[RMDB]
Conditions: 150 mM KOAc, 10 mM MgCl2 and 150 mM bicine (pH 8.5), 24 C. The record gives the reactivity of an RNA of 177 nucleotides to 2A3 and DMS. The 2A3 profile rests on 4,232 reads. For 2A3 the reverse transcriptase was SuperScript II with manganese.
RNA sequence: GGGAACGACUCGAGUAGAGUCGAAAACACGCCAUACUAUUUUUCGUAUUUUUAGUAGGAUGGGGUUUCGCCAUGUUGGCUAGUUAGUCUCGUACUCCUGGUCUCAAGUGAUCUGCCCACCUUGGCCGUGGUUCUAUAGUUUCGACUAUAGAACCACAAAAGAAACAACAACAACAAC
Reactivity to 2A3 in 0.01 (KOAc 150mM, MgCl2 10mM, bicine 150mM(pH8.5), 24C), signal-to-noise 3, nucleotides 027 to 126: c040a010c030g060c000c000a020u060a060c030u050a110u050u050u010u070u170c060g050u110a190u050u110u020u040u080a050g030u020a020g020g080a110u030g030g000g010g000u000u070u080c030g000c040c040a120u110g050u110u120g120g000c010u010a010g040u110u060a010g020u010c040u030c180g020u070a020c000u020c000c010u010g030g000u020c040u010c030a010a040g010u000g060a070u020c030u130g140c000c020c000a020c020c010u030u040g060g030c050c050
Reactivity to DMS in 0.01 (KOAc 150mM, MgCl2 10mM, bicine 150mM(pH8.5), 24C), signal-to-noise 3, nucleotides 027 to 126: c100a080c150g010c020c000a170u020a050c030u000a020u000u000u000u020u000c130g010u010a060u010u010u020u000u010a060g000u010a030g020g010a030u010g000g020g020g010u000u000u010c040g010c030c010a060u010g010u000u000g010g010c030u000a040g000u000u000a090g010u000c020u020c210g000u000a080c030u000c260c000u000g020g010u000c030u000c060a070a060g010u000g010a040u000c070u000g010c060c010c000a060c070c040u000u010g010g020c090c170

It was measured as part of the RMDB library OK2TRN.